Chemical mapping of a 207-nucleotide RNA with 2A3 and DMS. For DMS, 2,177 sequencing reads were counted. For 2A3, 976 sequencing reads were counted.
RNA sequence: GGGAACGACUCGAGUAGAGUCGAAAAGAGUAGGAUUAAUGAAACCAGUCUGGAGAGCAGUCACAGAAUGAGAAUAGAUCUUUCCCAUAGUAUCACUAUGUGACUAACUGAUUGUACUGAUGUGUUACAGAAAACACUGUAAAAAGUUAACCAGAGAGGUCCAUUACUAGUUCGCUAGUAAUGGACCAAAAGAAACAACAACAACAAC
Reactivity to 2A3 in 0.01 (KOAc 150mM, MgCl2 10mM, bicine 150mM(pH8.5), 24C), signal-to-noise 2, nucleotides 027 to 156: g060a000g020u090a020g000g020a020u080u080a120a130u230g070a090a060a060c040c010a010g040u040c070u050g000g010a070g000a000g040c020a000g000u010c020a020c010a000g130a100a050u090g000a020g010a040a050u070a070g130a100u060c050u060u030u010c040c010c000a010u010a060g050u060a010u080c000a010c050u060a060u060g020u000g040a000c020u010a040a030c020u020g040a080u080u090g050u110a060c020u030g080a150u030g050u000g000u000u030a020c030a120g130a030a100a010a020c060a000c010u020g050u100a000a030a060a030a060g020u040u030a020a030c030c020a000g100a000g180a190
Reactivity to DMS in 0.01 (KOAc 150mM, MgCl2 10mM, bicine 150mM(pH8.5), 24C), signal-to-noise 2, nucleotides 027 to 156: g030a020g010u070a050g000g020a150u010u010a040a120u010g010a100a050a050c050c000a080g000u000c060u010g010g010a170g000a050g060c060a050g000u000c010a030c000a020g000a080a030u000g000a090g020a090a210u010a050g000a060u000c090u000u000u000c010c010c050a210u000a130g030u000a110u000c040a030c030u000a140u020g020u000g000a020c020u000a070a170c110u000g010a130u000u000g030u000a120c050u010g010a100u000g000u000g010u000u010a300c030a160g000a130a070a100a090c050a040c010u010g000u000a100a110a130a070a060g010u000u000a020a130c000c010a090g000a240g030a120

The RNA was probed in 150 mM KOAc, 10 mM MgCl2 and 150 mM bicine (pH 8.5) at 24 C.